The record gives the reactivity of an RNA of 177 nucleotides to DMS and 2A3. It was measured as part of the RMDB library RFMREP. The 2A3 profile rests on 1,552 reads.

RNA sequence: GGGAACGACUCGAGUAGAGUCGAAAAGCGCCCUAGAGCGUCCCCAGCGCCGAGGGCCGGUGCCCGGCGUGCUAACCAUGCGUCUGCGGCCAAGGCCGAGCUCCGAGCGGCGUUAGCGCCCUCUGCGGACCUUCAUAAAGUUCGCUUUAUGAAGGUCAAAAGAAACAACAACAACAAC
Reactivity to DMS in 0.01 (KOAc 150mM, MgCl2 10mM, bicine 150mM(pH8.5), 24C), signal-to-noise 2, nucleotides 027 to 126: g020c100g020c010c010c090u000a120g000a130g010c000g030u000c030c010c000c060a210g000c010g010c010c050g010a060g010g000g010c010c010g030g010u000g010c000c020c010g000g010c020g010u000g020c050u000a090a090c200c170a180u000g000c020g010u000c030u010g050c120g010g000c000c060a120a090g000g010c010c010g010a040g000c070u000c130c080g000a090g010c040g010g010c020g000u010u000a070g000c130g000c000c000c000u000c010u000g000c080g000
Reactivity to 2A3 in 0.01 (KOAc 150mM, MgCl2 10mM, bicine 150mM(pH8.5), 24C), signal-to-noise 1, nucleotides 027 to 126: g020c010g020c000c010c010u070a050g080a030g020c010g000u060c030c000c000c010a030g060c030g010c000c030g010a000g020g000g000c020c010g100g060u150g020c000c000c020g000g000c000g020u020g010c010u040a060a010c030c000a060u120g000c010g020u020c070u140g060c090g020g010c000c020a040a060g120g000c020c000g020a040g010c040u070c070c140g050a120g050c030g040g000c010g030u000u080a030g000c020g010c060c010c000u000c050u030g030c050g050
Overview: Conditions: 150 mM KOAc, 10 mM MgCl2 and 150 mM bicine (pH 8.5), 24 C.